[RMDB]
RNA sequence: GGGAACGACUCGAGUAGAGUCGAAAACUGUUAGUGGUUGAAUCCGUGUUGCUAGCAGGCAUUUAGGUGACAGUCGGACCCUCAAAGGAUUCACCAGCAAUCUACACAAAUCCUUUUGAAGGGAGUGCCCACAUGAUAAAUUCGUUUAUCAUGUGGGAAAAGAAACAACAACAACAAC
Reactivity to 2A3 in 0.01 (KOAc 150mM, MgCl2 10mM, bicine 150mM(pH8.5), 24C), signal-to-noise 6, nucleotides 027 to 126: c020u010g030u050u040a060g030u030g090g020u040u190g030a040a020u020c010c020g010u070g050u070u100g000c010u010a060g050c030a070g100g000c030a060u070u100u120a070g070g000u040g030a040c030a030g040u050c040g040g060a070c010c000c000u030c060a090a100a000g020g000a000u030u020c030a020c040c010a010g060c020a030a130u060c070u210a090c040a000c020a080a180a070u040c010c010u050u090u110u240g080a070a060g010g010g020a050g030u080g030
Reactivity to DMS in 0.01 (KOAc 150mM, MgCl2 10mM, bicine 150mM(pH8.5), 24C), signal-to-noise 8, nucleotides 027 to 126: c030u000g010u000u000a050g040u010g010g010u010u010g010a050a050u000c010c020g010u000g010u000u010g010c040u000a080g020c110a080g000g010c060a060u010u000u000a090g010g010u000g010a090c100a060g010u000c040g010g010a240c050c000c000u010c080a040a060a060g000g010a020u000u000c040a070c060c040a090g010c160a080a080u000c100u000a110c090a050c130a060a080a080u000c010c010u000u000u000u010g000a120a090g010g010g000a120g010u000g010